[RMDB]
An RNA of 177 nucleotides, treated with DMS and read out base by base. Conditions: 150 mM KOAc, 10 mM MgCl2 and 150 mM bicine (pH 8.5), 24 C.
RNA sequence: GGGAACGACUCGAGUAGAGUCGAAAAAAAAACGGCAGCAAGCCGAGCAACGCGAGCAACGCGAGCAAGUACAGCAAGUACAGCAACAUGAGCAACAUGAGCAAGUAGAGCAACUACAGGAAAAAAACUGUACUCCUUAGUUCGCUAAGGAGUACAGAAAAGAAACAACAACAACAAC
Reactivity to DMS in 0.01 (KOAc 150mM, MgCl2 10mM, bicine 150mM(pH8.5), 24C), signal-to-noise 1, nucleotides 027 to 126: a040a040a040a040a220c060g030g000c080a110g030c140a080a060g000c000c030g000a150g010c000a070a060c070g010c100g000a180g000c140a100a070c060g110c010g030a280g030c000a080a040g000u010a030c110a070g000c060a030a030g010u000a040c000a000g000c100a040a080c060a000u010g000a030g000c070a060a040c040a010u010g010a130g000c030a080a060g010u010a040g040a180g060c080a060a030c080u000a060c180a080g000g010a000a000a060a170a040a020a080

Description
The data come from the RNA Mapping Database (RMDB), library M2PK90.